The data come from the RNA Mapping Database (RMDB), library OK2TRN.
Structure probing data (DMS and 2A3) for a 177-nucleotide construct.
Values cover nucleotides 27 to 126.
Values are in units of 0.01, from 0 to 300, in steps of 10.
[RMDB]
RNA sequence: GGGAACGACUCGAGUAGAGUCGAAAACGUCUGACGAACGAGUUCUUUACGACCGGUGAUAACAAUUGGUAUUACAUUGGCGCAAACGGUAAGAGCGUGACGGGUGAGGUCAAGAUUGGUGAUGAUAGCUGCAAACAAUGUUCGCAUUGUUUGCAGCAAAAGAAACAACAACAACAAC
Reactivity to DMS in 0.01 (KOAc 150mM, MgCl2 10mM, bicine 150mM(pH8.5), 24C), signal-to-noise 2, nucleotides 027 to 126: c070g000u000c030u000g020a070c040g000a110a050c040g030a080g000u000u010c060u000u000u000a070c090g000a110c000c020g000g030u020g000a080u000a090a090c080a100a210u010u020g020g000u000a050u030u010a030c090a060u000u000g020g000c070g030c060a020a090a100c110g010g000u010a090a100g010a040g010c040g010u010g000a060c020g000g010g010u000g010a110g010g010u000c040a030a060g000a050u000u000g000g000u010g020a110u000g010a100u010a060
Reactivity to 2A3 in 0.01 (KOAc 150mM, MgCl2 10mM, bicine 150mM(pH8.5), 24C), signal-to-noise 1, nucleotides 027 to 126: c000g030u030c040u080g080a030c040g000a100a020c020g010a020g090u120u050c020u030u120u140a100c050g030a090c070c040g060g020u050g070a060u060a130a050c060a160a150u110u060g000g010u060a060u010u040a060c060a060u080u080g010g000c040g000c100a060a050a110c010g010g040u090a070a040g060a000g040c070g030u030g020a010c040g020g080g010u060g010a030g080g060u050c010a010a010g000a090u030u080g050g010u090g080a030u160g030a010u110a080